RNA sequence: GGGAACGACUCGAGUAGAGUCGAAAAGAUAUGGAGCGAGAAUUCCUAUGAAGUGUAGGCCCUUCGGAAACGAAGGACUACAUGGAGGAACUCGCUCCUAAGUCAAAGAAGCUGUUCGCAGCUUCAAGUUUCUUAUGCCGUUCGCGGCAUAAGAAACAAAAGAAACAACAACAACAAC
Reactivity to DMS in 0.01 (KOAc 150mM, MgCl2 10mM, bicine 150mM(pH8.5), 24C), signal-to-noise 1, nucleotides 027 to 126: g000a050u010a300u000g000g000a010g020c000g000a010g000a210a240u000u000c000c000u000a230u000g000a120a280g010u000g000u000a000g040g020c300c000c010u000u000c000g020g000a050a060a200c010g020a020a030g000g000a260c000u000a000c010a000u000g010g020a000g010g040a020a070c000u000c000g000c000u010c000c000u000a000a020g010u000c020a080a150a080g010a040a000g030c000u000g020u020u010c240g010c000a020g000c000u000u010c000a010a120
Reactivity to 2A3 in 0.01 (KOAc 150mM, MgCl2 10mM, bicine 150mM(pH8.5), 24C), signal-to-noise 1, nucleotides 027 to 126: g020a000u120a000u210g010g000a000g020c050g020a000g030a170a300u120u060c040c000u300a300u110g030a040a000g000u000g010u010a010g040g000c090c000c000u000u000c040g010g010a050a080a010c020g000a010a000g000g020a000c010u010a000c010a000u000g000g030a000g010g000a030a010c010u010c010g030c010u000c000c010u000a000a010g000u000c030a040a060a060g010a000a000g010c000u010g060u160u300c300g000c260a000g020c050u000u000c010a010a020